This 177-nucleotide RNA was probed chemically with 2A3 and DMS.
It was measured as part of the RMDB library OK2TST.
For 2A3 the reverse transcriptase was SuperScript II with manganese.
In probing experiments dimethyl sulfate is read out at A N1 and C N3, which are open when not base-paired.
[RMDB]
RNA sequence: GGGAACGACUCGAGUAGAGUCGAAAAUCUGUUGAACAUGCCCAGUUCCUCUGAUGAUAUCUGUAUGGUUGAUCUGUAAAAGCUAUUGUUCAACGUGAGAACAAGUAUGAAGGAGCCUAUGGUCACCCGUCCUGAUAUGUUUCGACAUAUCAGGACGAAAAGAAACAACAACAACAAC
Reactivity to 2A3 in 0.01 (KOAc 150mM, MgCl2 10mM, bicine 150mM(pH8.5), 24C), signal-to-noise 1, nucleotides 027 to 126: u010c010u040g050u050u040g000a030a000c010a030u110g050c000c000c080a010g010u010u000c000c010u000c020u040g140a120u000g060a090u070a110u180c040u040g140u230a200u070g000g020u020u030g030a030u030c010u060g050u080a150a050a010a000g050c060u090a060u170u090g010u000u010c010a070a060c110g010u090g060a120g000a000a020c020a100a010g030u030a180u190g130a070a010g090g020a010g000c000c000u120a140u160g000g050u040c030a060c020c020
Reactivity to DMS in 0.01 (KOAc 150mM, MgCl2 10mM, bicine 150mM(pH8.5), 24C), signal-to-noise 2, nucleotides 027 to 126: u000c030u010g020u000u000g000a030a020c060a040u000g020c000c030c010a160g010u000u000c020c000u000c060u000g010a090u000g020a130u000a200u010c020u000g010u000a090u000g000g000u000u010g000a040u000c060u000g030u000a050a090a140a120g010c080u000a050u000u000g020u010u010c020a060a050c110g010u010g010a070g000a040a070c090a060a080g000u020a060u020g000a140a150g030g000a110g010c010c060u000a080u010g000g000u000c040a130c050c030